[RMDB]
RNA sequence: GGGAACGACUCGAGUAGAGUCGAAAACACAUCGGCUGGCACGCGCACGGCGGCAGACGGGUCAUUACCGCACAGCGCGCGGAAGACUGCCCGCCACACGCGGCACGCGCGCCCUGCACACUCACCGCGUACUGCGGUGCUUCGGCACCGCAGUACGAAAAGAAACAACAACAACAAC
Reactivity to 2A3 in 0.01 (KOAc 150mM, MgCl2 10mM, bicine 150mM(pH8.5), 24C), signal-to-noise 2, nucleotides 027 to 126: c040a000c020a060u100c020g010g050c010u040g080g000c020a020c130g030c000g020c030a030c070g040g030c010g000g000c010a010g090a120c060g070g000g010u020c020a070u040u190a150c010c000g030c010a050c020a180g090c000g010c030g000c030g070g020a020a040g080a050c050u110g010c010c040c000g000c010c020a110c010a010c060g010c000g000g020c000a000c020g020c000g000c000g030c000c010c000u040g000c010a000c010a000c020u010c000a040c000c010g050
Reactivity to DMS in 0.01 (KOAc 150mM, MgCl2 10mM, bicine 150mM(pH8.5), 24C), signal-to-noise 1, nucleotides 027 to 126: c060a150c180a050u020c080g010g000c000u000g000g000c170a210c000g000c020g000c280a000c110g150g000c010g000g070c000a050g000a240c300g000g030g020u000c090a000u000u090a070c010c000g140c010a020c210a150g000c100g000c050g000c020g000g000a110a060g000a100c040u000g000c030c010c000g030c000c030a020c300a140c230g000c000g000g040c010a060c000g010c000g000c030g000c050c090c160u000g000c150a000c000a170c070u000c000a000c090c050g050
Notes:
Source: RMDB library OK1LIB, as collected in RNAgym. Structure probing data (2A3 and DMS) for a 177-nucleotide construct. For 2A3 the reverse transcriptase was SuperScript II with manganese.